[RMDB]
RNA sequence: GGGAACGACUCGAGUAGAGUCGAAAAAAAGAUAUGGACGGUGAACUACGUCGUAACAUACUCGAAGAACGAGAUUCGGAAACGAAUCUCGGGAGAGUAUGGAUAAGACGCACCGUCCUAAGUCAAAGUUACACUAAAUCUUCGGAUUUAGUGUAACAAAAGAAACAACAACAACAAC
Reactivity to 2A3 in 0.01 (KOAc 150mM, MgCl2 10mM, bicine 150mM(pH8.5), 24C), signal-to-noise 5, nucleotides 027 to 126: a000a000a020g060a030u050a030u080g000g000a000c010g000g040u020g020a150a110c130u230a060c300g010u010c010g020u000a020a000c000a000u010a000c000u010c020g260a300a040g010a040a010c000g000a000g000a010u000u010c010g020g010a030a030a020c010g000a010a010u000c010u010c010g010g010g000a030g000a000g000u000a000u000g000g000a010u020a040a040g000a000c000g000c010a000c000c000g010u010c000c000u000a020a010g010u000c010a040a070a070
Reactivity to DMS in 0.01 (KOAc 150mM, MgCl2 10mM, bicine 150mM(pH8.5), 24C), signal-to-noise 5, nucleotides 027 to 126: a080a070a120g010a020u000a220u010g000g000a010c000g050g010u010g000a110a080c190u010a300c040g010u010c000g010u010a170a240c000a010u000a000c000u000c000g000a140a160g010a120a190c020g000a010g000a010u000u000c000g000g010a050a040a090c000g010a020a000u010c000u000c000g000g000g000a030g010a030g010u000a000u000g000g000a060u000a090a160g010a010c010g000c000a010c000c000g000u010c000c000u000a000a030g000u000c010a070a120a130